[RMDB]
RNA sequence: GGGAACGACUCGAGUAGAGUCGAAAAGAACGCAUUGUUCAUGCUAUCAGCGUAUGGAAUGAGCCUCUACUUUUUCGCUGAUAGGUAGAUUCAUGUAUUGCGGAACGUGAAGGCUCAUGAUGUGUUAGAUGCGUAUGUUAUUCGUGACAUAUGUAUCAAAAGAAACAACAACAACAAC
Reactivity to DMS in 0.01 (KOAc 150mM, MgCl2 10mM, bicine 150mM(pH8.5), 24C), signal-to-noise 9, nucleotides 027 to 126: g000a090a060c020g010c010a020u010u010g010u020u010c020a030u000g000c010u010a060u020c120a060g010c070g020u010a040u010g000g010a110a050u000g000a010g000c000c000u000c030u010a070c090u010u010u010u010u010c000g010c000u010g000a020u010a010g000g020u020a100g010a120u040u060c060a030u010g010u030a040u010u000g000c000g000g000a030a040c300g010u010g010a060a030g000g000c000u000c000a040u010g010a060u010g010u010g010u000u010a110
Reactivity to 2A3 in 0.01 (KOAc 150mM, MgCl2 10mM, bicine 150mM(pH8.5), 24C), signal-to-noise 9, nucleotides 027 to 126: g080a040a010c010g000c010a020u010u090g040u120u090c020a010u080g070c000u020a050u110c030a020g020c010g030u040a030u050g030g040a060a030u020g000a000g000c010c000u010c020u010a060c040u060u090u030u030u090c010g000c010u010g010a010u010a010g030g020u040a050g020a080u080u100c020a000u050g030u060a030u010u110g000c000g000g020a030a020c020g040u050g060a070a000g010g000c000u000c000a010u030g040a030u040g040u020g010u040u070a030

The record gives the reactivity of an RNA of 177 nucleotides to DMS and 2A3.
It was measured as part of the RMDB library OK1LIB.
The DMS profile rests on 82,013 reads.
The reactions ran in a buffer of 150 mM KOAc, 10 mM MgCl2 and 150 mM bicine (pH 8.5), at 24 C.
DMS adducts were read by reverse transcription with MarathonRT.